Structure probing data (DMS and 2A3) for a 177-nucleotide construct. Source: RMDB library OK1LIB, as collected in RNAgym. For 2A3, 2,321 sequencing reads were counted. The reactions ran in a buffer of 150 mM KOAc, 10 mM MgCl2 and 150 mM bicine (pH 8.5), at 24 C.
RNA sequence: GGGAACGACUCGAGUAGAGUCGAAAAGGUCACACGUGACGGCGAGUCGGCGGCCAAGUUCAUCUUGGAUGUGGAUCCGCGUUACAUCCACCUGAUUCCGGCAAAUGUGAACGCCGACAUCAAGGCGGGGUACAGAGUACUUCGGUACUCUGUACCCAAAAGAAACAACAACAACAAC
Reactivity to DMS in 0.01 (KOAc 150mM, MgCl2 10mM, bicine 150mM(pH8.5), 24C), signal-to-noise 3, nucleotides 027 to 126: g020g000u010c100a060c160a140c170g020u020g000a030c000g020g020c040g000a050g010u000c000g020g010c030g000g000c010c010a000a050g040u020u050c270a120u000c000u000u000g000g000a030u010g000u010g020g010a030u000c040c030g000c060g010u000u000a020c030a070u010c150c230a080c040c030u010g000a110u000u000c040c000g010g000c150a070a180a040u050g010u010g000a140a210c030g000c000c000g010a030c120a060u020c140a140a120g000g000c050g010
Reactivity to 2A3 in 0.01 (KOAc 150mM, MgCl2 10mM, bicine 150mM(pH8.5), 24C), signal-to-noise 3, nucleotides 027 to 126: g020g010u100c010a030c010a030c140g060u060g020a000c000g070g090c000g000a020g020u010c020g050g000c040g010g000c000c010a000a020g030u110u180c090a190u020c130u060u060g010g020a050u040g030u030g150g000a110u040c020c040g030c030g020u020u040a010c010a040u010c010c000a000c000c020u040g020a090u060u060c040c000g010g040c070a030a030a160u240g060u120g060a080a000c030g000c000c000g050a030c040a070u100c080a070a090g030g030c060g050